[RMDB]
RNA sequence: GGGAACGACUCGAGUAGAGUCGAAAAGAUAUGGAGAACUACGAAUGACAAAGCUCGCGCUCGGAAACGAGCGAACUACGAGCAAUUUGCAUUCGCUCCUAAGUCAAAACGGCCGUUCGCGGCCGAACAUUUACAAUCUCUUCGGAGAUUGUAAAUGAAAAGAAACAACAACAACAAC
Reactivity to 2A3 in 0.01 (KOAc 150mM, MgCl2 10mM, bicine 150mM(pH8.5), 24C), signal-to-noise 5, nucleotides 027 to 126: g020a020u060a040u150g040g020a020g020a140a070c140u190a050c300g020a010a000u060g150a190c040a070a120a090g270c000u010c000g010c010g000c010u010c000g020g030a060a050a040c010g010a000g000c020g000a030a020c040u100a020c030g000a000g010c000a020a090u040u010u030g010c000a010u000u010c000g010c000u000c000c010u020a150a010g030u030c020a000a020a120a210c010g000g030c080c000g010u070u050c300g000c020g180g030c010c000g000a010a000
Reactivity to DMS in 0.01 (KOAc 150mM, MgCl2 10mM, bicine 150mM(pH8.5), 24C), signal-to-noise 4, nucleotides 027 to 126: g000a050u000a300u010g020g020a060g000a120a090c170u010a300c020g000a020a020u000g000a100c010a020a030a110g000c000u000c000g010c010g000c000u000c000g000g000a080a060a180c000g000a010g000c010g000a020a020c090u020a280c010g030a010g000c020a030a030u000u000u000g010c010a000u000u000c010g000c010u000c000c000u010a040a120g010u010c020a050a060a120a230c020g030g010c000c000g030u000u010c210g020c020g020g000c010c010g000a030a080